[RMDB]
RNA sequence: GGGAACGACUCGAGUAGAGUCGAAAAAUGUCUUUCAGGGCAUUGAAACGGCUGUUGGCCAUUAUGUUCAUGCUCGCCUGAAGGGUGGUCUUAUUUUAAAGUUUGACUCUGGCACCGUUAGCAAGACUUGAGUUGUGCUUCGGCACAACUAAAAGAAACAACAACAACAAC
Reactivity to DMS in 0.01 (KOAc 150mM, MgCl2 10mM, bicine 150mM(pH8.5), 24C), signal-to-noise 5, nucleotides 027 to 129: a070u030g020u020c030u000u000u000c130a110g010g050g040c000a080u040u000g020a050a050a050c130g030g040c030u050g030u050u030g030g040c000c010a160u000u000a080u010g010u000u030c030a030u020g020c050u070c120g040c020c000u050g020a020a010g000g000g000u000g050g000u020c030u010u010a010u000u000u000u000a050a080a160g000u040u010u020g020a070c040u030c080u020g010g050c090a070c070c040g030u000u000a030g040c080a100a060g020a090c060u000u000g030
Reactivity to 2A3 in 0.01 (KOAc 150mM, MgCl2 10mM, bicine 150mM(pH8.5), 24C), signal-to-noise 5, nucleotides 027 to 129: a000u030g010u000c000u000u130u050c060a040g020g030g000c000a010u020u130g030a110a040a010c060g010g000c030u160g080u300u130g160g000c020c030a030u130u100a140u220g040u000u000c000a000u010g030c010u050c090g080c050c010u000g010a000a000g040g000g030u060g030g000u010c020u050u070a130u060u130u000u110a110a220a100g000u040u020u060g020a040c010u000c020u070g000g000c010a000c040c000g050u030u040a010g030c060a160a000g060a070c050u030u060g040

Background:
Chemical mapping of a 170-nucleotide RNA with DMS and 2A3. For 2A3, 6,059 sequencing reads were counted. Values cover nucleotides 27 to 129. 2A3 adducts were read by reverse transcription with SuperScript II with manganese.